[RMDB]
RNA sequence: GGGAACGACUCGAGUAGAGUCGAAAAUCGCCGAAAGACCAGGGUGUUUUAGCUAAUAGACUCGACCAGAGUUUUGGGCAAACGGUCCCUGGGUCGACCAAACUUGGACGACCUAGACCGGCUGAUAUCCAAUGAGGACCUUCGGGUCCUCAUUGGAAAAAGAAACAACAACAACAAC
Reactivity to 2A3 in 0.01 (KOAc 150mM, MgCl2 10mM, bicine 150mM(pH8.5), 24C), signal-to-noise 2, nucleotides 027 to 126: u040c030g000c000c000g050a010a060a000g080a020c030c040a030g050g070g000u000g040u000u030u000u120a110g000c000u000a020a110u080a170g010a000c000u000c010g110a150c070c130a130g010a030g040u000u010u020u040g000g000g000c000a090a030a000c010g010g040u030c000c000c000u000g010g000g010u010c000g010a020c000c000a110a070a300c120u180u150g000g000a040c000g000a000c000c000u030a050g070a070c000c000g010g000c010u070g000a090u060a060
Reactivity to DMS in 0.01 (KOAc 150mM, MgCl2 10mM, bicine 150mM(pH8.5), 24C), signal-to-noise 3, nucleotides 027 to 126: u010c070g000c000c030g030a280a050a080g000a130c140c010a100g000g000g020u010g030u000u000u010u030a070g010c090u000a070a090u050a090g000a010c020u000c000g010a140c260c140a200g010a020g000u000u000u000u000g000g010g020c000a050a050a190c060g010g000u000c000c100c040u000g000g000g000u000c000g000a060c020c000a050a240a110c190u050u020g000g020a120c000g000a010c000c030u000a050g000a030c100c000g000g010c070u060g000a140u030a100

About this RNA: Structure probing data (2A3 and DMS) for a 177-nucleotide construct. The DMS profile rests on 3,019 reads. The reactions ran in a buffer of 150 mM KOAc, 10 mM MgCl2 and 150 mM bicine (pH 8.5), at 24 C. For 2A3, 985 sequencing reads were counted. Values cover nucleotides 27 to 126.